[RMDB]
RNA sequence: GGGAACGACUCGAGUAGAGUCGAAAAGUGGUGCGCGGAGAGGGUAACCACCGGCGCGCGUCACUGAUAUAUCCACCGGGGUGUAAGGGGAGAAAAGGAUACAGCGCGACGAAGUUAGCACGCUGCCGAAAUGUACCCACAUUCGUGUGGGUACAAAGAUAACGGUAGAUUUCGAUCUACCGUUAUCAAAAGAAACAACAACAACAAC
Reactivity to DMS in 0.01 (KOAc 150mM, MgCl2 10mM, bicine 150mM(pH8.5), 24C), signal-to-noise 2, nucleotides 027 to 156: g050u000g010g000u000g020c010g040c030g050g030a170g010a160g000g040g000u010a110a160c120c110a130c030c000g010g010c000g000c010g010c000g010u000c000a030c000u030g020a120u010a120u010a080u000c050c010a110c040c020g000g000g020g020u000g010u030a060a130g010g010g000g030a140g010a050a060a080a100g000g010a220u000a030c000a060g010c040g010c010g000a150c060g000a070a170g020u000u000a090g040c000a030c060g000c010u000g000c010c050g000a040a070a120u010g040u000a000c000c010c000a020c000a130u000u010c230g040u010g050u010g010g000g010u040a010c000a010a010a070
Reactivity to 2A3 in 0.01 (KOAc 150mM, MgCl2 10mM, bicine 150mM(pH8.5), 24C), signal-to-noise 3, nucleotides 027 to 156: g000u000g000g000u010g010c010g000c030g060g090a140g040a140g060g040g040u090a120a100c100c010a050c000c040g060g040c000g000c000g000c000g010u000c000a000c000u000g000a000u010a020u030a030u170c050c040a030c080c020g000g000g000g040u050g040u090a040a060g000g050g010g000a030g030a040a050a000a020g040g000a030u100a160c030a010g040c020g040c040g100a100c030g020a080a020g050u060u060a030g070c050a010c070g000c020u030g000c020c000g040a050a040a040u090g000u000a000c000c040c000a000c000a020u050u120c190g060u020g000u010g030g000g000u000a000c000a000a000a000
Chemical mapping of a 207-nucleotide RNA with DMS and 2A3. It was measured as part of the RMDB library M2RFPK. The reactions ran in a buffer of 150 mM KOAc, 10 mM MgCl2 and 150 mM bicine (pH 8.5), at 24 C. DMS adducts were read by reverse transcription with MarathonRT.